[RMDB]
RNA sequence: GGGAACGACUCGAGUAGAGUCGAAAACUCAUAUGCCCCCGCAAGCGAGGGCCUGGUCGAUUAGUGAGACCAGGUGCGACGCGGGGGCUACAGCCCGGCCUCAGCGAGGUCCCCUCGGUAGGUGCCUUCAGCAAUACUUAUUCGUAAGUAUUGCUGAAAAAGAAACAACAACAACAAC
Reactivity to 2A3 in 0.01 (KOAc 150mM, MgCl2 10mM, bicine 150mM(pH8.5), 24C), signal-to-noise 9, nucleotides 027 to 126: c010u010c020a050u080a050u240g000c000c000c000c000c000g000c020a080a150g120c030g060a070g050g140g000c000c000u000g000g010u000c020g080a170u160u220a220g150u160g210a100g010a020c000c000a000g000g000u040g010c000g010a020c060g000c000g000g000g000g000g000c000u000a000c000a000g030c000c010c000g020g010c000c000u050c030a050g070c020g060a020g000g030u090c030c010c000c000u030c020g020g050u060a040g010g060u070g030c010c000u010
Reactivity to DMS in 0.01 (KOAc 150mM, MgCl2 10mM, bicine 150mM(pH8.5), 24C), signal-to-noise 4, nucleotides 027 to 126: c080u010c080a110u040a090u040g000c010c000c010c000c020g020c010a130a250g010c060g000a100g010g020g000c000c010u000g000g020u000c000g020a270u020u030a150g020u030g030a280g000a010c000c000a000g000g010u010g000c010g000a130c180g010c000g030g010g010g010g010c000u000a000c120a060g020c030c020c020g010g010c020c010u000c060a080g010c050g000a060g010g000u000c030c040c010c010u000c030g010g000u010a050g020g020u000g000c030c030u000
Structure probing data (2A3 and DMS) for a 177-nucleotide construct. The RNA was probed in 150 mM KOAc, 10 mM MgCl2 and 150 mM bicine (pH 8.5) at 24 C. DMS adducts were read by reverse transcription with MarathonRT. Values are in units of 0.01, from 0 to 300, in steps of 10.